[RMDB]
RNA sequence: GGGAACGACUCGAGUAGAGUCGAAAAUCCGUGCCGUUCGCGGCACGGAAAACCGAUGGUAGUGUGGGGUCUCCCCAUGCGAGAGUAGGGAACUGCCAGGCAAAAGCUGUGGCUUCGGCCACAGCAAUCUAUAUGCUAAGUUCGCUUAGCAUAUAGAAAAAGAAACAACAACAACAAC
Reactivity to 2A3 in 0.01 (KOAc 150mM, MgCl2 10mM, bicine 150mM(pH8.5), 24C), signal-to-noise 4, nucleotides 027 to 126: u000c000c000g000u000g000c020c010g050u070u080c300g010c010g100g020c010a000c020g010g040a040a010a000a000c010c000g010a040u020g020g020u010a010g010u010g000u020g020g010g060g150u080c230u290c060c000c000c010a010u010g000c000g020a040g010a020g010u040a020g020g000g000a010a040c040u120g050c020c030a080g040g070c050a040a070a040a120g000c000u000g000u000g000g000c000u020u040c210g070g000c020c000a000c010a000g000c000a000a000
Reactivity to DMS in 0.01 (KOAc 150mM, MgCl2 10mM, bicine 150mM(pH8.5), 24C), signal-to-noise 7, nucleotides 027 to 126: u000c000c010g040u000g020c010c000g020u000u010c220g030c010g020g010c010a000c010g000g000a010a010a070a170c000c000g000a100u080g000g000u000a090g000u000g020u000g000g000g000g010u010c150u010c020c000c000c000a010u000g000c010g000a190g000a040g000u000a160g000g000g000a090a110c140u000g010c030c040a140g010g010c190a080a060a110a090g000c000u000g020u000g010g010c000u000u010c180g020g000c000c000a010c000a010g010c010a010a010
An RNA of 177 nucleotides, treated with 2A3 and DMS and read out base by base.
2A3 adducts were read by reverse transcription with SuperScript II with manganese.
The DMS profile rests on 11,342 reads.